Notes
An RNA of 177 nucleotides, treated with DMS and 2A3 and read out base by base. Conditions: 150 mM KOAc, 10 mM MgCl2 and 150 mM bicine (pH 8.5), 24 C.
[RMDB]
RNA sequence: GGGAACGACUCGAGUAGAGUCGAAAAUAGCAGUCUUUCGAGACUGCUACAUUAAUAGUCGCUAGAAAACGAUCAAAACUAGCGACUAUCAUAACGAUCGAAAAGACGCACCCUUCGGGGUGCGUAACUACGUUGAAACUUUCGAGUUUCAACGUAGAAAAGAAACAACAACAACAAC
Reactivity to DMS in 0.01 (KOAc 150mM, MgCl2 10mM, bicine 150mM(pH8.5), 24C), signal-to-noise 2, nucleotides 027 to 126: u000a000g000c010a000g040u000c000u000u000u000c210g030a010g020a020c000u000g010c000u020a010c020a070u010u010a120a090u000a000g010u000c000g010c000u000a010g000a070a020a140a050c060g050a050u010c070a110a090a110a090c000u010a010g010c000g010a010c000u010a000u000c170a040u000a090a120c160g000a080u010c020g010a150a030a030a090g010a040c060g020c020a000c000c000c010u000u030c230g050g020g000g000u000g010c010g020u000a000a060
Reactivity to 2A3 in 0.01 (KOAc 150mM, MgCl2 10mM, bicine 150mM(pH8.5), 24C), signal-to-noise 2, nucleotides 027 to 126: u080a000g030c000a000g000u000c020u050u110u130c220g100a000g000a020c000u010g000c010u000a000c010a000u030u030a010a010u020a000g000u010c000g010c020u020a020g020a090a220a070a180c130g070a130u130c080a020a100a040a100c000u020a010g020c000g040a000c020u000a000u030c000a010u040a100a040c060g000a080u080c060g100a030a000a010a140g180a010c000g010c010a010c000c000c000u000u050c170g020g040g000g000u010g000c000g000u000a000a000
Overview: DMS adducts were read by reverse transcription with MarathonRT. The DMS profile rests on 1,108 reads.